[RMDB]
An RNA of 177 nucleotides, treated with DMS and 2A3 and read out base by base. It was measured as part of the RMDB library M2PK50.
RNA sequence: GGGAACGACUCGAGUAGAGUCGAAAACAUACGGACUUCGGUCCGUAUGAAAGAACCUCAAAUUGACGGAAACUUCCGCGUCAUCGCGAGGAAGCGAGGAAAAAAUCGAGGUGUUCGCACCUCGAAACAGAAGCUUAUAGUUCGCUAUAAGCUUCUGAAAAGAAACAACAACAACAAC
Reactivity to DMS in 0.01 (KOAc 150mM, MgCl2 10mM, bicine 150mM(pH8.5), 24C), signal-to-noise 5, nucleotides 027 to 126: c000a010u000a010c000g000g000a020c000u010u010c170g040g010u000c000c000g000u000a000u000g000a030a060a100g010a120a110c030c010u000c110a070a150a090u010u010g020a140c070g000g000a090a140a110c080u000u000c020c010g000c010g000u000c130a080u010c180g010c080g000a040g000g000a040a040g010c080g010a130g000g020a000a040a060a080a100a090u000c000g000a000g000g010u000g010u000u010c170g020c010a020c000c010u000c000g000a000a030a130
Reactivity to 2A3 in 0.01 (KOAc 150mM, MgCl2 10mM, bicine 150mM(pH8.5), 24C), signal-to-noise 4, nucleotides 027 to 126: c000a010u000a000c000g000g010a000c010u050u070c230g090g000u000c000c000g000u000a000u010g000a000a000a000g050a040a060c000c000u030c020a080a110a100u130u120g050a030c030g040g060a070a120a110c070u090u000c030c030g040c010g090u090c040a230u140c060g010c020g010a050g020g050a010a020g020c020g010a070g050g000a120a080a020a000a010a030u030c010g010a000g010g010u000g010u020u040c200g010c040a000c000c010u000c010g000a000a000a000

The 2A3 profile rests on 8,427 reads.